Source information
Structure probing data (DMS and 2A3) for a 177-nucleotide construct. The 2A3 profile rests on 953 reads. Conditions: 150 mM KOAc, 10 mM MgCl2 and 150 mM bicine (pH 8.5), 24 C. Source: RMDB library OK2TST, as collected in RNAgym. The DMS profile rests on 1,379 reads.
RNA sequence: GGGAACGACUCGAGUAGAGUCGAAAACGUCCUUGGAGUCCGUCAAGGUCAUGAGAGGCUGCCUUGUGCAAUCGCGUAAAACCACCUCGGUACUGGCGGCUGCCCUGCUGUUUUGCGGCCUGUUAGGGACUCCCGUGCUAUUCGUAGCACGGGAGUCAAAAGAAACAACAACAACAAC
Reactivity to DMS in 0.01 (KOAc 150mM, MgCl2 10mM, bicine 150mM(pH8.5), 24C), signal-to-noise 1, nucleotides 027 to 126: c150g010u000c010c000u000u010g020g010a160g010u000c020c070g040u000c070a030a000g010g000u000c050a080u000g010a070g000a090g050g020c030u000g010c010c020u010u030g010u020g020c060a070a010u000c080g000c010g000u000a080a080a130a080c090c060a110c150c150u000c120g030g030u000a050c140u000g000g010c000g020g000c080u000g010c030c020c030u000g010c170u010g010u000u000u020u000g020c060g000g000c010c010u010g000u000u000a030g010g010
Reactivity to 2A3 in 0.01 (KOAc 150mM, MgCl2 10mM, bicine 150mM(pH8.5), 24C), signal-to-noise 1, nucleotides 027 to 126: c040g020u040c010c000u020u090g050g050a030g030u000c020c020g070u130c090a060a030g020g000u070c080a090u120g070a090g010a010g120g020c000u010g000c030c000u040u060g040u040g060c020a090a120u080c050g000c030g120u200a050a100a040a000c000c000a110c020c110u130c110g010g000u060a090c080u080g080g020c030g000g000c000u010g010c020c000c000u080g030c040u110g030u190u100u090u090g040c010g000g000c000c000u030g040u050u160a120g000g070